This 207-nucleotide RNA was probed chemically with 2A3.
RNA sequence: GGGAACGACUCGAGUAGAGUCGAAAAUGCAGGCCUUAGUUGGCCAACCCCCUGCUCCAGCGCAGCCAUGUGCCAAUGCCCAAGAACCUAAAACACCCUAUGGGACUAAAGGAUGCCUCAAUUUACUGGUAGCUCCCGGGAACCUUACAUGCAACAACUGGCAUUACUACUUCGGUAGUAAUGCCAGAAAAGAAACAACAACAACAAC
Reactivity to 2A3 in 0.01 (KOAc 150mM, MgCl2 10mM, bicine 150mM(pH8.5), 24C), signal-to-noise 1, nucleotides 027 to 156: u100g050c010a060g000g030c020c000u210u130a140g130u300u090g010g000c010c010a020a080c010c000c000c010c000u060g010c030u020c050c050a010g040c020g010c060a000g000c000c010a160u120g000u050g000c010c000a030a040u050g010c000c000c000a000a030g060a030a100c010c130u040a110a000a020a050c050a100c050c000c050u040a100u100g010g000g010a010c030u060a170a000a000g060g010a000u070g030c000c000u050c020a080a040u020u120u170a100c030u060g000g030u010a000g010c010u090c050c010c000g040g010g000a020a000c000c000u030u110a050c090a030u090g060c020a010a050c000a020a050
High 2A3 reactivity points to a flexible backbone, as in loops and unpaired stretches. Values cover nucleotides 27 to 156.